Annotation
The data come from the RNA Mapping Database (RMDB), library RNAMAK. Structure probing data (2A3 and DMS) for a 207-nucleotide construct. The DMS profile rests on 3,098 reads. 2A3 adducts were read by reverse transcription with SuperScript II with manganese. In probing experiments dimethyl sulfate is read out at A N1 and C N3, which are open when not base-paired. The RNA was probed in 150 mM KOAc, 10 mM MgCl2 and 150 mM bicine (pH 8.5) at 24 C.

RNA sequence: GGGAACGACUCGAGUAGAGUCGAAAAAGAAGAUUCGUCUUCUAAACAACCUUUGUGUGUCACUACCACAGGGAGAUCACGGUUCCCAUUGGGAACCCUCUGAUCAUCGAUCUGUGGGUCAGUGACACACUCUGGUACAAUGACUGUUCGCAGUCAAACAUUACAAGCUCUUCGGAGCUUGUAAUGUAAAAGAAACAACAACAACAAC
Reactivity to 2A3 in 0.01 (KOAc 150mM, MgCl2 10mM, bicine 150mM(pH8.5), 24C), signal-to-noise 4, nucleotides 027 to 156: a010g010a010a000g010a020u100u140c190g120u010c090u000u000c020u080a080a130a040c070a030a030c010c000u000u030u000g000u000g000u000g000u000c000a000c010u040a060c000c010a000c000a010g010g000g020a030g000a000u000c000a010c210g000g000u010u010c010c010c080a140u250u300g000g000g000a000a000c000c000c000u000c000u010g000a000u010c000a060u250c010g040a030u010c000u000g000u010g000g000g020u030c010a000g000u000g000a000c000a000c000a000c000u000c000u000g000g000u060a090c080a050a210u100g000a010c000u010g030u090u140c250g000c130a010g000u000c000a050a030
Reactivity to DMS in 0.01 (KOAc 150mM, MgCl2 10mM, bicine 150mM(pH8.5), 24C), signal-to-noise 2, nucleotides 027 to 156: a040g020a030a000g010a070u010u000c300g000u000c000u000u010c020u000a070a090a120c080a180a110c010c010u010u000u010g030u000g030u000g020u000c000a000c000u010a130c020c010a030c000a050g010g030g020a100g000a010u000c000a050c060g010g020u030u000c000c000c020a300u010u010g060g040g000a000a000c000c000c010u010c020u010g020a040u000c000a220u010c140g040a020u000c010u000g000u000g000g000g020u000c070a000g050u010g030a020c000a000c000a000c000u000c010u010g020g020u000a080c080a130a090u000g010a090c010u000g030u000u000c200g020c030a020g010u020c010a070a090